An RNA of 177 nucleotides, treated with 2A3 and DMS and read out base by base. The data come from the RNA Mapping Database (RMDB), library OK1LIB. 2A3 adducts were read by reverse transcription with SuperScript II with manganese. The RNA was probed in 150 mM KOAc, 10 mM MgCl2 and 150 mM bicine (pH 8.5) at 24 C. For 2A3, 5,187 sequencing reads were counted. DMS (dimethyl sulfate) methylates the pairing face of unpaired adenines and cytosines. The DMS profile rests on 13,224 reads.
RNA sequence: GGGAACGACUCGAGUAGAGUCGAAAAGCACCGGUGGUGAAGAAGGGAAAUCAAUCACAGUUUCCUUGAAUGUUUUGUGCUCACUUAGGACCGGUUGGCAGUGUCUUGAGGAAUACGGACGAGCAUGCAGUCAUGAUGAUUUCGAUCAUCAUGACUGAAAAGAAACAACAACAACAAC
Reactivity to 2A3 in 0.01 (KOAc 150mM, MgCl2 10mM, bicine 150mM(pH8.5), 24C), signal-to-noise 7, nucleotides 027 to 126: g060c050a040c060c020g040g030u090g010g020u040g030a070a070g050a050a090g110g030g040a020a050a040u120c110a050a050u080c030a030c060a120g020u010u040u040c020c000u060u060g100a150a070u170g080u070u090u080u130g050u060g020c000u000c030a020c010u020u070a050g070g000a020c010c010g110g000u100u100g080g020c050a020g020u030g010u180c010u040u060g030a020g050g070a100a080u170a120c080g050g020a010c020g000a010g010c010a010u110g020
Reactivity to DMS in 0.01 (KOAc 150mM, MgCl2 10mM, bicine 150mM(pH8.5), 24C), signal-to-noise 6, nucleotides 027 to 126: g020c070a090c010c010g020g020u020g000g030u020g010a080a070g000a200a070g000g000g000a020a020a030u020c090a100a110u040c200a140c260a130g010u000u000u000c000c000u000u010g010a120a090u020g000u000u000u010u010g020u020g000c040u010c030a090c030u000u010a060g010g000a050c020c030g010g010u030u020g010g020c080a060g020u030g010u010c020u000u020g000a040g000g000a050a090u030a100c100g020g000a080c100g000a050g000c010a040u020g020